[RMDB]
RNA sequence: GGGAACGACUCGAGUAGAGUCGAAAACUAGUGAGGGCAUUGCUGCUGACACCAAAGAUAUUACCCCCGCUCACUGGUCGCCUGCGAUCAGGGUUCGGAAUUUUUGGACCAAGGCCCCCUUACUUAACCCUUUCUCGCCUUUCGAGGCGAGAAAGGGAAAAGAAACAACAACAACAAC
Reactivity to 2A3 in 0.01 (KOAc 150mM, MgCl2 10mM, bicine 150mM(pH8.5), 24C), signal-to-noise 2, nucleotides 027 to 126: c020u050a000g030u030g000a050g000g000g000c130a100u060u300g040c060u070g000c040u090g020a030c010a020c080c020a000a090a030g070a030u110a090u120u220a130c000c010c000c000c000g010c040u030c000a010c000u040g020g000u000c000g060c050c140u130g160c020g030a020u000c010a000g040g000g000u030u010c000g000g000a000a000u000u000u000u000u090g200g000a210c020c020a030a050g000g000c000c000c000c040c000u050u000a040c000u050u020a070a040

The data come from the RNA Mapping Database (RMDB), library RFM100. Chemical mapping of a 177-nucleotide RNA with 2A3. For 2A3 the reverse transcriptase was SuperScript II with manganese. Reactivities are given for positions 27 through 126.